[RMDB]
This 177-nucleotide RNA was probed chemically with DMS and 2A3. Values cover nucleotides 27 to 126. The 2A3 profile rests on 2,179 reads. For DMS, 1,670 sequencing reads were counted. For DMS the reverse transcriptase was MarathonRT.

RNA sequence: GGGAACGACUCGAGUAGAGUCGAAAAAAAAAAGAUAUGGAGAAAGCACUCCUUGGAUUUAUGGUCAAGUAUAUCGGAAACGAUAUACGUAGCCAUUGUCAGGAGGCUUUCUCCUAAGUCAAAAAAACACAGUAUAACUGUUCGCAGUUAUACUGUGAAAAGAAACAACAACAACAAC
Reactivity to DMS in 0.01 (KOAc 150mM, MgCl2 10mM, bicine 150mM(pH8.5), 24C), signal-to-noise 2, nucleotides 027 to 126: a000a010a090a110a090a050g000a030u000a300u000g010g000a030g000a020a020a020g000c000a120c010u010c000c010u000u010g020g000a020u020u010u000a010u000g010g000u010c010a300a300g020u000a010u000a010u000c000g000g010a160a080a150c010g010a010u000a020u000a000c000g010u000a290g000c000c000a010u010u000g000u000c000a030g000g010a000g000g000c010u000u000u000c000u010c000c000u000a000a060g000u050c010a010a000a050a070a050a060a220
Reactivity to 2A3 in 0.01 (KOAc 150mM, MgCl2 10mM, bicine 150mM(pH8.5), 24C), signal-to-noise 1, nucleotides 027 to 126: a000a000a000a000a020a050g100a070u160a110u140g020g010a000g010a010a010a000g000c030a170c300u020c010c070u000u080g130g010a080u260u300u300a020u050g000g000u130c030a050a020g010u000a010u000a000u000c000g000g050a030a130a000c010g010a000u010a010u020a050c000g000u020a000g000c000c000a000u000u000g000u020c000a000g010g000a050g000g000c010u000u000u000c000u010c000c000u020a010a010g010u000c010a070a010a000a200a070a010a000